[RMDB]
RNA sequence: GGGAACGACUCGAGUAGAGUCGAAAACUGGUCGGGGGCCUCGGGGAGAGCCACCACCAAGCGGUGUACGAGCAACCCGGGGAGGUUCUCGGCCAAGAGCGCCGUCUCCGGAAGCCCGUGGGCCCGGCCUGAGUAAGGAGUUCGCUCCUUACUCAGGAAAAGAAACAACAACAACAAC
Reactivity to DMS in 0.01 (KOAc 150mM, MgCl2 10mM, bicine 150mM(pH8.5), 24C), signal-to-noise 3, nucleotides 027 to 126: c020u000g030g000u010c000g040g000g000g050g000c000c000u000c010g000g000g000g000a100g000a300g000c010c000a070c150c000a000c010c020a170a090g010c200g000g020u000g000u030a090c150g000a300g020c010a180a080c120c000c000g010g020g020g010a170g010g000u000u010c000u000c000g000g000c140c140a010a050g000a080g000c050g000c000c000g020u020c030u000c030c000g000g000a270a150g000c020c000c000g040u030g010g000g000c000c000c040g000g010
Reactivity to 2A3 in 0.01 (KOAc 150mM, MgCl2 10mM, bicine 150mM(pH8.5), 24C), signal-to-noise 2, nucleotides 027 to 126: c010u040g020g020u020c060g030g010g000g040g090c000c010u010c020g010g010g000g000a170g030a020g010c000c010a000c020c000a010c010c020a080a060g200c210g040g000u030g020u050a050c150g030a030g040c010a030a030c000c020c000g000g060g050g010a010g020g030u090u030c000u000c000g020g000c020c010a000a020g000a000g000c060g000c000c000g200u100c040u010c040c000g010g030a050a050g070c000c000c020g050u150g010g020g010c000c000c000g000g000
Overview: The record gives the reactivity of an RNA of 177 nucleotides to DMS and 2A3. As a SHAPE reagent, 2A3 marks flexible, mostly unpaired nucleotides at the ribose 2'-OH. It was measured as part of the RMDB library OK1LIB. For 2A3 the reverse transcriptase was SuperScript II with manganese. The DMS profile rests on 3,893 reads.